[RMDB]
RNA sequence: GGGAACGACUCGAGUAGAGUCGAAAAACACUGGUGCUUUCCGUCAGGACAUCUACCAGCGUGUAGCUCUGGCUAUCGAGGACGGAAGUGGGAACCUGAAGUCUGAGCUGACUCCGGGAGAACUGAACAUGUUGCGAACUUUCGAGUUCGCAACAUGAAAAGAAACAACAACAACAAC
Reactivity to 2A3 in 0.01 (KOAc 150mM, MgCl2 10mM, bicine 150mM(pH8.5), 24C), signal-to-noise 4, nucleotides 027 to 126: a010c130a010c080u100g070g060u080g010c020u040u080u110c000c010g010u010c040a030g010g040a050c000a100u200c040u080a020c010c030a070g180c120g120u300g010u050a000g000c010u000c000u010g000g000c000u050a080u300c100g110a140g040g110a020c000g000g050a030a040g060u080g020g020g040a010a050c010c000u000g030a020a000g000u000c030u070g060a050g070c050u020g060a030c010u020c030c000g000g010g030a140g020a110a060c060u080g010a030a000
Reactivity to DMS in 0.01 (KOAc 150mM, MgCl2 10mM, bicine 150mM(pH8.5), 24C), signal-to-noise 2, nucleotides 027 to 126: a070c110a140c040u030g020g060u060g000c060u000u020u000c000c000g000u030c020a100g040g000a020c080a000u080c030u000a020c000c000a160g000c280g010u040g000u000a010g000c010u000c000u000g000g000c050u040a060u040c170g020a100g030g010a030c000g020g020a040a050g050u020g000g020g000a180a100c000c000u000g020a080a000g010u000c010u000g000a130g020c130u020g000a040c030u000c040c000g000g000g000a060g000a070a100c050u020g000a120a210